[RMDB]
RNA sequence: GGGAACGACUCGAGUAGAGUCGAAAACUUUAUUUUUGUCUUAGAAUCUUCUGAAUAUUGAAAACAGAGAACUAUACUGGAAGAACAUAGUGUAUUAAGACUCAUGGAGAGGGAGAUGUGAUACUGUGUCACUGAGGUCGUUCCAGUCAUAGGAGAACUACCUUGCCUCAUUCGUGAGGCAAGGUAGAAAAGAAACAACAACAACAAC
Reactivity to 2A3 in 0.01 (KOAc 150mM, MgCl2 10mM, bicine 150mM(pH8.5), 24C), signal-to-noise 1, nucleotides 027 to 156: c010u130u240u120a140u060u140u050u100u090g020u080c010u000u040a110g040a100a140u060c100u140u000c010u210g050a180a050u080a150u120u190g050a070a090a050a220c050a000g000a000g000a020a000c000u010a000u050a040c020u020g000g060a010a010g040a120a000c050a000u090a020g030u020g010u030a060u030u030a000a040g150a060c000u040c050a110u020g060g020a110g020a020g080g080g000a040g000a040u050g000u020g090a020u040a040c020u050g020u030g150u170c040a010c040u040g000a000g110g000u040c000g020u000u000c000c000a010g040u010c040a000u090a030g000g000a000g170a000a000